[RMDB]
RNA sequence: GGGAACGACUCGAGUAGAGUCGAAAAUGCGGCAUCCUGCUGCGCAAGUCGACCUGGGACGCUUCUCGAGCGCGCUGGGUGCUUAUGAACCCUUUCAACGAGGACGGUGAGUACAAGCAGCUUUUCACCUUCUCCAAGUUCGACUUCAAGGAUAUGCCAUACGCAUUUUGUUCGCAAAAUGCGUAUGAAAAGAAACAACAACAACAAC
Reactivity to 2A3 in 0.01 (KOAc 150mM, MgCl2 10mM, bicine 150mM(pH8.5), 24C), signal-to-noise 5, nucleotides 027 to 156: u200g010c050g000g000c000a010u020c010c010u040g050c090u110g010c020g000c040a050a030g040u030c000g030a120c060c030u110g000g050g060a040c040g050c110u160u080c080u070c080g140a060g010c020g010c000g000c000u010g010g000g020u010g010c000u010u020a060u060g010a000a030c020c000c000u000u140u080c100a080a040c070g010a010g000g020a020c090g030g010u010g010a040g040u070a070c040a090a080g080c050a060g010c020u070u050u060u040c010a020c010c000u050u030c040u020c010c010a050a050g010u050u070c020g060a040c000u090u070c100a060a050g090g010a140u110a060u240g050c050
Reactivity to DMS in 0.01 (KOAc 150mM, MgCl2 10mM, bicine 150mM(pH8.5), 24C), signal-to-noise 2, nucleotides 027 to 156: u000g040c070g020g040c030a040u000c050c030u010g040c080u000g090c030g000c060a050a150g020u000c000g020a150c000c010u030g030g010g010a160c110g020c050u020u010c040u000c030g000a200g030c040g030c030g010c000u000g010g020g010u000g000c000u010u000a080u000g020a090a140c050c010c010u000u020u000c070a150a090c100g000a140g010g020a040c080g020g020u010g000a110g040u010a090c070a090a130g020c060a180g020c020u000u010u020u000c010a050c030c000u000u000c010u000c010c010a080a160g010u000u030c020g020a070c030u000u000c040a090a050g010g020a110u000a090u000g000c060